RNA sequence: GGGAACGACUCGAGUAGAGUCGAAAAUUCAUCGAACCUGAAGAACCGGGCGAUCCGUUCAAAGUAUCCGAUGCAGAUACUAUGCUGCAAUUCGUUGCUCCCGAUUGGAAGGCUCAAGAGUCUGUGGGCGACGAUAGCUCUUCGGAGCUAUCGUCGCAAAAGAAACAACAACAACAAC
Reactivity to 2A3 in 0.01 (KOAc 150mM, MgCl2 10mM, bicine 150mM(pH8.5), 24C), signal-to-noise 1, nucleotides 027 to 126: u040u040c000a090u000c050g000a110a040c000c000u070g160a000a000g000a030a000c260c090g000g000g030c000g000a000u150c030c010g080u070u050c000a030a030a000g120u130a030u020c030c000g040a160u210g010c050a000g000a000u120a160c210u170a110u300g050c000u000g020c000a110a060u000u010c000g000u040u180g080c000u000c030c000c000g050a050u000u000g000g180a010a010g030g000c000u000c000a110a050g080a000g090u000c020u240g000u040g040g010
This 177-nucleotide RNA was probed chemically with 2A3. Conditions: 150 mM KOAc, 10 mM MgCl2 and 150 mM bicine (pH 8.5), 24 C. The data come from the RNA Mapping Database (RMDB), library OK1LIB.